[RMDB]
RNA sequence: GGGAACGACUCGAGUAGAGUCGAAAAGAUAUGGAAUGCUAUGGAGCUCGUCGGAAACGACUGAGCGUUGAAAUAGUCAUUCCUAAGUCAAAAGACAUACUCUACUGUUCGCAGUAGAGUAUGUCAACGAUUAUGCACAGUUCGCUGUGCAUAAUCGAAAAGAAACAACAACAACAAC
Reactivity to 2A3 in 0.01 (KOAc 150mM, MgCl2 10mM, bicine 150mM(pH8.5), 24C), signal-to-noise 3, nucleotides 027 to 126: g000a010u040a040u140g010g010a000a000u020g000c000u010a010u020g030g010a020g000c000u010c000g020u010c010g030g030a160a080a070c020g030a030c140u300g020a000g000c000g040u080u020g000a010a000a010u050a020g100u210c020a000u000u000c000c000u000a080a020g060u020c030a050a060a050a100g000a000c000a000u000a010c000u020c000u010a010c000u000g100u090u080c300g010c190a000g000u000a000g000a000g000u000a000u010g000u000c000a000a010
Reactivity to DMS in 0.01 (KOAc 150mM, MgCl2 10mM, bicine 150mM(pH8.5), 24C), signal-to-noise 4, nucleotides 027 to 126: g010a020u000a300u010g010g000a000a000u000g000c010u000a010u000g000g010a090g010c000u010c000g000u000c010g000g000a110a080a180c010g010a020c010u000g010a000g020c000g020u000u010g010a110a140a010u000a010g000u030c010a010u010u000c010c000u010a030a110g010u000c030a060a060a120a130g000a000c000a000u000a000c000u000c000u000a000c010u000g010u000u010c220g010c000a020g000u000a000g000a010g010u000a000u000g000u000c000a020a050